An RNA of 207 nucleotides, treated with 2A3 and read out base by base.
Values cover nucleotides 27 to 156.

[RMDB]
RNA sequence: GGGAACGACUCGAGUAGAGUCGAAAAAGAGUGGUACAUUUGUUAAAAUUGAUGAACAUGCAUUGAUACAUCAUUAUCACCUGAAGUCCAUAGUUAACAUUAGAGUUUACUCUUGGUGUUGUACAUUCUAUGGGUUUGGACAGAUAUACAUGUGUCCACCCUGAGAUGCGUUCGCGCAUCUCAGGGUAAAAGAAACAACAACAACAAC
Reactivity to 2A3 in 0.01 (KOAc 150mM, MgCl2 10mM, bicine 150mM(pH8.5), 24C), signal-to-noise 1, nucleotides 027 to 156: a000g000a020g020u060g000g020u150a120c130a150u030u180u160g110u120u140a180a130a130a000u030u020g000a000u040g020a020a100c100a100u170g090c040a010u100u110g070a020u020a080c000a020u020c000a000u030u000a000u000c030a030c010c030u090g030a040a000g060u000c000c000a030u020a040g030u030u120a030a000c020a020u000u110a020g010a000g070u250u250u150a180c140u120c030u000u170g020g030u060g000u110u010g050u160a070c030a140u130u000c000u060a080u030g000g010g010u000u130u080g060g000a100c100a090g040a030u030a000u040a100c060a000u100g010u000g000u170c000c000

2A3 adducts were read by reverse transcription with SuperScript II with manganese. 2A3 is a SHAPE reagent: it acylates the 2'-hydroxyl of flexible nucleotides of all four kinds. The RNA was probed in 150 mM KOAc, 10 mM MgCl2 and 150 mM bicine (pH 8.5) at 24 C. Source: RMDB library OK3TST, as collected in RNAgym. The 2A3 profile rests on 403 reads.